Chemical mapping of a 177-nucleotide RNA with DMS and 2A3. DMS adducts were read by reverse transcription with MarathonRT. The DMS profile rests on 787 reads. For 2A3 the reverse transcriptase was SuperScript II with manganese. Conditions: 150 mM KOAc, 10 mM MgCl2 and 150 mM bicine (pH 8.5), 24 C.

RNA sequence: GGGAACGACUCGAGUAGAGUCGAAAAGACUUGCCGUGCCACCAAUCAACAUGGAUCUGAUGAAGUAUCCACAGAGCUCAAGGUCGUCGGCGGUGGCGGUGUCUCAUACGAAUGGCAGAGCACUGCACCCGUAAGGUCCAUUCGUGGACCUUACGGGAAAAGAAACAACAACAACAAC
Reactivity to DMS in 0.01 (KOAc 150mM, MgCl2 10mM, bicine 150mM(pH8.5), 24C), signal-to-noise 2, nucleotides 027 to 126: g000a070c050u020u000g050c000c010g040u000g040c000c010a080c060c020a070a140u000c070a080a040c150a080u000g010g010a040u000c030u010g010a270u030g000a190a040g030u020a040u000c040c000a010c220a110g000a140g020c100u000c160a060a080g000g060u020c080g010u000c040g000g040c080g020g050u000g000g000c010g000g010u000g020u000c010u000c050a150u030a160c060g000a060a050u000g000g000c080a160g010a040g000c050a070c020u030g010c180a170
Reactivity to 2A3 in 0.01 (KOAc 150mM, MgCl2 10mM, bicine 150mM(pH8.5), 24C), signal-to-noise 1, nucleotides 027 to 126: g050a060c010u130u260g000c000c010g000u080g000c000c020a050c010c010a030a080u190c080a020a080c000a070u050g000g000a000u010c000u010g060a140u210g020a090a050g070u180a050u000c000c010a020c000a030g050a030g020c010u040c130a050a040g050g110u070c010g020u000c000g000g100c030g000g070u090g070g000c000g020g020u010g000u020c010u030c020a160u190a140c080g140a280a070u110g080g010c070a020g000a000g030c000a010c040u020g020c050a070